Structure probing data (2A3 and DMS) for a 177-nucleotide construct.
In probing experiments dimethyl sulfate is read out at A N1 and C N3, which are open when not base-paired.
2A3 adducts were read by reverse transcription with SuperScript II with manganese.
The reactions ran in a buffer of 150 mM KOAc, 10 mM MgCl2 and 150 mM bicine (pH 8.5), at 24 C.
The 2A3 profile rests on 1,726 reads.
High 2A3 reactivity points to a flexible backbone, as in loops and unpaired stretches.

RNA sequence: GGGAACGACUCGAGUAGAGUCGAAAAGAACGAAUCGGAGCUUGACUCACACCCACUUAACGUCACGACAACGCCGGCACCGAUUCUUGGCGCAAUCUUCGGAUGUUUCAGUGCAAUCGCCUUGGUGUGCCGUAUGACGAUUCGUCGUCAUACGGCAAAAAGAAACAACAACAACAAC
Reactivity to 2A3 in 0.01 (KOAc 150mM, MgCl2 10mM, bicine 150mM(pH8.5), 24C), signal-to-noise 2, nucleotides 027 to 126: g050a040a020c040g000a060a020u100c020g030g000a030g040c000u060u050g070a100c010u030c040a040c000a050c060c010c000a020c030u050u090a100a000c010g060u000c030a010c110g100a060c030a130a030c020g030c000c000g030g000c020a010c030c010g010a010u040u000c000u000u110g050g000c030g000c040a000a050u000c010u070u030c100g060g000a020u030g060u000u130u000c070a030g000u020g050c010a000a040u060c000g010c010c000u040u090g080g000u100g020
Reactivity to DMS in 0.01 (KOAc 150mM, MgCl2 10mM, bicine 150mM(pH8.5), 24C), signal-to-noise 2, nucleotides 027 to 126: g000a100a080c120g020a030a120u000c060g000g030a040g010c020u020u040g000a010c030u000c130a140c130a100c060c030c020a070c060u060u010a080a070c180g000u000c040a150c060g050a050c140a140a070c130g000c100c000g020g010c000a000c000c000g000a050u070u020c050u000u050g000g030c160g010c210a010a010u110c000u000u000c090g000g000a020u010g000u000u000u000c020a090g050u020g000c070a040a040u020c040g000c060c020u070u010g000g000u000g030